Source: RMDB library 15KLIB, as collected in RNAgym. Structure probing data (2A3 and DMS) for a 170-nucleotide construct. The RNA was probed in 150 mM KOAc, 10 mM MgCl2 and 150 mM bicine (pH 8.5) at 24 C. Values cover nucleotides 27 to 129.
RNA sequence: GGGAACGACUCGAGUAGAGUCGAAAAGUGACGCAAUUCAAGUAGCCAAGUGCUAUGGGGAGUCUGUGUUAGUUAAUGCUGCUAACACACAUCUUAAGCAUGGCGGUGGUAUCGCUGGUGCUAUUAAUAACCAUACCCUUCGGGGUAUGGAAAAGAAACAACAACAACAAC
Reactivity to 2A3 in 0.01 (KOAc 150mM, MgCl2 10mM, bicine 150mM(pH8.5), 24C), signal-to-noise 9, nucleotides 027 to 129: g080u060g030a030c050g020c100a020a050u120u040c060a140a040g030u010a010g030c010c020a160a030g090u070g120c010u030a080u090g030g010g000g030a060g040u020c050u030g000u010g000u000u020a020g000u020u140a150a080u300g140c160u070g000c000u020a000a000c000a000c000a010c020a090u030c020u090u100a050a010g010c000a010u020g030g000c040g020g010u060g080g130u140a090u210c020g010c020u060g080g040u030g010c010u030a050u150u130a120a100u120a060a010
Reactivity to DMS in 0.01 (KOAc 150mM, MgCl2 10mM, bicine 150mM(pH8.5), 24C), signal-to-noise 7, nucleotides 027 to 129: g040u040g020a050c050g030c090a100a060u050u040c020a090a060g000u020a050g020c000c090a130a090g040u050g000c020u000a030u010g000g000g000g000a010g000u000c170u000g010u000g010u000u000a030g010u020u080a060a100u030g040c160u050g000c020u010a010a020c010a000c010a040c100a070u000c050u020u010a090a040g030c030a040u020g010g010c050g010g000u030g010g040u070a060u060c070g030c040u040g000g010u000g010c010u000a080u040u010a100a070u010a060a110